[RMDB]
RNA sequence: GGGAACGACUCGAGUAGAGUCGAAAAGCUAAACGAGGGCUUCGCCUCCUACGUGGAGUACCUGGGUGCCGACCACGCGCAGCCCACCUGGAAUCUGAAGGACCUCAUGGUGCUGAACGACGUGUACGCAUGGAUGGAAUUUCGAUUCCAUCCAUGCAAAAGAAACAACAACAACAAC
Reactivity to 2A3 in 0.01 (KOAc 150mM, MgCl2 10mM, bicine 150mM(pH8.5), 24C), signal-to-noise 2, nucleotides 027 to 126: g050c020u090a150a140a020c080g050a040g030g040g030c010u050u000c020g040c020c000u020c040c030u100a080c130g150u170g050g020a020g020u100a080c000c000u020g040g050g020u000g010c000c040g050a090c000c050a050c020g030c030g010c020a020g040c010c000c000a010c000c000u020g030g040a030a080u060c090u160g040a060a040g080g080a210c020c000u050c050a050u060g000g000u060g060c030u060g060a030a030c030g080a020c070g080u140g050u080a020c070
Reactivity to DMS in 0.01 (KOAc 150mM, MgCl2 10mM, bicine 150mM(pH8.5), 24C), signal-to-noise 2, nucleotides 027 to 126: g000c010u000a090a150a090c120g000a060g010g020g000c050u000u000c060g010c290c070u000c050c040u010a080c170g030u000g010g010a040g000u000a070c240c010u000g000g000g010u010g000c060c050g000a160c060c050a140c020g000c090g000c020a080g000c060c040c010a020c020c030u000g020g000a050a110u000c100u000g010a060a050g000g000a130c010c000u010c060a060u010g020g050u020g040c010u000g000a060a080c050g000a100c110g000u020g000u000a020c170